[RMDB]
RNA sequence: GGGAACGACUCGAGUAGAGUCGAAAAUUCCGCUUCGGCGGAAGGUGAGUCCUAAGUCCGUCAUUCAAUGGGAGUCUCGGGUAUCGGAAACGAUAUCUCUAGCGUGGACGAGGAUCAUUGAGGGACGGAUAUGGAAGUCUUAGACGUUCGCGUCUAACUAGCAUACUCCUUUCGAGGAGUAUGCUAGAAAAGAAACAACAACAACAAC
Reactivity to DMS in 0.01 (KOAc 150mM, MgCl2 10mM, bicine 150mM(pH8.5), 24C), signal-to-noise 1, nucleotides 027 to 156: u000u000c000c000g030c010u000u000c240g020g000c000g000g030a000a020g000g020u000g010a180g000u000c000c000u000a100a230g010u000c010c050g030u020c000a070u000u000c000a030a040u000g000g010g010a150g030u000c010u000c050g000g020g040u000a020u000c020g000g000a160a120a300c000g030a020u000a020u000c000u000c020u010a090g010c090g000u000g000g030a020c020g010a140g010g000a060u010c000a040u000u000g010a050g010g000g000a010c000g000g010a020u000a060u010g000g010a110a090g030u000c040u000u000a020g010a030c000g010u020u000c300g020c030g000u000c000u000a090a160
Reactivity to 2A3 in 0.01 (KOAc 150mM, MgCl2 10mM, bicine 150mM(pH8.5), 24C), signal-to-noise 3, nucleotides 027 to 156: u030u000c010c010g000c020u010u090c290g220g000c010g000g000a000a000g090g060u200g110a120g070u000c000c010u050a120a030g000u010c000c040g000u000c010a060u000u000c000a000a030u000g000g020g030a020g010u010c010u010c020g040g000g000u000a000u000c010g020g060a040a030a070c010g000a000u000a020u000c020u000c110u200a120g070c090g140u300g050g000a000c000g000a240g020g000a010u000c000a000u000u010g010a010g000g030g010a000c000g000g010a000u010a010u010g000g020a070a110g040u000c070u050u010a010g000a010c000g050u060u100c300g060c030g060u030c010u000a020a020

Source: RMDB library RNAMAK, as collected in RNAgym. This 207-nucleotide RNA was probed chemically with DMS and 2A3. Reactivities are given for positions 27 through 156. For DMS, 3,256 sequencing reads were counted.